[RMDB]
RNA sequence: GGGAACGACUCGAGUAGAGUCGAAAAGAUAUGGAAUUAGUGGUAAUCCCGAAGGGCGAUAAGAAGCACUCGGAAACGAGUGUCUUCUUUUGACGCCUGUAUGGGAUUACCACUAAUUCCUAAGUCACUUAGGUAGAGUCUUCGGACUCUACCUAAGAAAAGAAACAACAACAACAAC
Reactivity to DMS in 0.01 (KOAc 150mM, MgCl2 10mM, bicine 150mM(pH8.5), 24C), signal-to-noise 1, nucleotides 027 to 126: g010a040u000a300u010g000g000a020a010u000u010a000g040u000g000g010u000a000a030u000c010c000c000g010a190a300g010g000g020c010g010a140u010a000a000g000a000a020g000c000a010c000u000c010g000g010a210a120a200c010g000a020g010u000g000u000c020u000u000c000u000u000u010u010g030a230c060g000c000c010u000g040u010a180u020g010g000g010a000u030u000a000c000c000a000c000u000a000a000u000u000c000c010u000a020a070g000u000c010a130
Structure probing data (DMS) for a 177-nucleotide construct. DMS adducts were read by reverse transcription with MarathonRT. The data come from the RNA Mapping Database (RMDB), library TTRINS. Conditions: 150 mM KOAc, 10 mM MgCl2 and 150 mM bicine (pH 8.5), 24 C.